[RMDB]
RNA sequence: GGGAACGACUCGAGUAGAGUCGAAAAGUCCGGCGCGGAUAACCGCUGAAGGCAUCUAAGCGGGAAGCCGUUCCCGAGAUCAGUUCUCCUUCUGGUAAGGGCCCAGGUAGAACACCUGGUCGAUAGGACAGGUCUCCUACUUCGGUAGGAGACCUGUAAAAGAAACAACAACAACAAC
Reactivity to 2A3 in 0.01 (KOAc 150mM, MgCl2 10mM, bicine 150mM(pH8.5), 24C), signal-to-noise 1, nucleotides 027 to 126: g070u000c010c000g000g000c020g000c010g050g010a000u000a040a040c000c000g060c020u040g020a100a060g080g030c000a010u000c000u020a010a010g000c000g000g000g000a160a110g000c010c010g000u030u000c010c000c000g070a080g000a060u040c010a030g030u010u000c030u030c030c000u060u100c070u070g080g000u140a080a070g030g030g010c030c020c020a000g070g000u040a100g040a140a010c010a000c030c000u000g000g020u010c010g040a070u100a080g060g060
Reactivity to DMS in 0.01 (KOAc 150mM, MgCl2 10mM, bicine 150mM(pH8.5), 24C), signal-to-noise 2, nucleotides 027 to 126: g010u050c000c020g000g050c190g000c000g000g000a010u000a230a290c000c000g020c000u000g000a110a140g000g010c150a030u050c010u000a250a120g000c030g010g000g010a110a080g000c040c000g000u000u010c020c000c010g000a010g000a080u000c040a050g000u020u000c030u010c050c090u000u000c060u050g000g000u050a180a050g050g030g040c140c020c000a000g000g000u040a120g000a300a240c110a050c000c060u000g000g010u000c040g040a170u020a120g040g020